[RMDB]
RNA sequence: GGGAACGACUCGAGUAGAGUCGAAAAGCGUGACGUGGUCGCCGACCCGGUGCUGGCCGGGGUGCUCACCCGGUUGUCGCGCGACGAGGCCCGCCAUUUCAGCUUCAUGGCCGACGUGGUGACCCGAGGACUGCAUGAUAUUCGUAUCAUGCAGUCCAAAAGAAACAACAACAACAAC
Reactivity to 2A3 in 0.01 (KOAc 150mM, MgCl2 10mM, bicine 150mM(pH8.5), 24C), signal-to-noise 3, nucleotides 027 to 126: g030c020g050u080g030a060c030g080u120g060g020u060c030g030c010c000g040a080c020c030c010g000g040u070g030c140u060g050g010c000c040g110g050g020g060u120g000c040u060c040a070c000c010c000g030g020u060u150g040u020c020g010c000g000c000g050a010c010g020a060g000g010c030c050c020g000c010c010a030u050u040u040c030a000g000c010u180u140c150a190u300g040g000c000c010g020a040c000g010u020g010g000u020g020a070c000c010c000g030a110
Reactivity to DMS in 0.01 (KOAc 150mM, MgCl2 10mM, bicine 150mM(pH8.5), 24C), signal-to-noise 3, nucleotides 027 to 126: g030c090g020u000g020a030c030g010u000g010g010u000c040g000c020c010g010a070c040c010c030g000g020u000g030c160u010g000g010c000c010g010g030g010g020u010g000c110u010c160a130c070c000c020g010g000u010u000g010u000c020g000c080g010c010g000a040c040g000a150g010g000c010c020c020g010c020c040a030u000u010u000c020a060g000c020u010u010c230a160u000g010g010c000c030g010a040c030g020u000g010g000u000g000a110c000c000c030g010a210

Chemical mapping of a 177-nucleotide RNA with 2A3 and DMS. Reactivities are given for positions 27 through 126. The data come from the RNA Mapping Database (RMDB), library OK2TST. Conditions: 150 mM KOAc, 10 mM MgCl2 and 150 mM bicine (pH 8.5), 24 C. The 2A3 profile rests on 3,893 reads.